[RMDB]
RNA sequence: GGGAACGACUCGAGUAGAGUCGAAAACCGAUCCGAGGGGCCCGGUGGCCUGAUCUGGAGGGCACUCCGGGCCGUAGGGAAGAAAAGCACCCAGAGGGAGGAAGCCACACAGGGGUUUGCAGAGAAAGGACGACUAGGUUCGCCUAGUCGAAAAGAAACAACAACAACAAC
Reactivity to 2A3 in 0.01 (KOAc 150mM, MgCl2 10mM, bicine 150mM(pH8.5), 24C), signal-to-noise 5, nucleotides 027 to 129: c020c000g000a070u080c070c040g020a040g030g070g010g020c000c000c000g040g030u050g020g030c020c000u020g020a070u050c040u050g060g030a020g040g020g000c070a100c120u020c010c020g010g000g030c020c000g020u020a040g000g010g010a010a000g020a000a040a000a010g050c020a020c020c010c020a030g030a070g030g020g000a010g010g000a010a000g020c010c020a030c010a010c020a060g030g000g000g000u040u120u060g030c040a020g030a000g030a080a060a010g070g020a010
Reactivity to DMS in 0.01 (KOAc 150mM, MgCl2 10mM, bicine 150mM(pH8.5), 24C), signal-to-noise 9, nucleotides 027 to 129: c030c010g000a110u030c090c060g010a110g000g000g000g000c000c000c040g020g010u000g010g000c040c000u000g020a100u030c160u060g000g060a300g000g020g000c050a090c040u040c000c020g010g030g040c000c000g020u010a010g020g000g010a070a100g000a030a060a070a130g000c050a100c030c010c020a040g020a110g000g020g000a050g010g000a030a060g010c050c010a080c140a110c080a040g000g000g020g020u020u020u010g020c060a050g000a070g000a070a060a030g020g020a200

This 170-nucleotide RNA was probed chemically with 2A3 and DMS. For 2A3 the reverse transcriptase was SuperScript II with manganese. It was measured as part of the RMDB library 15KLIB. The DMS profile rests on 60,443 reads.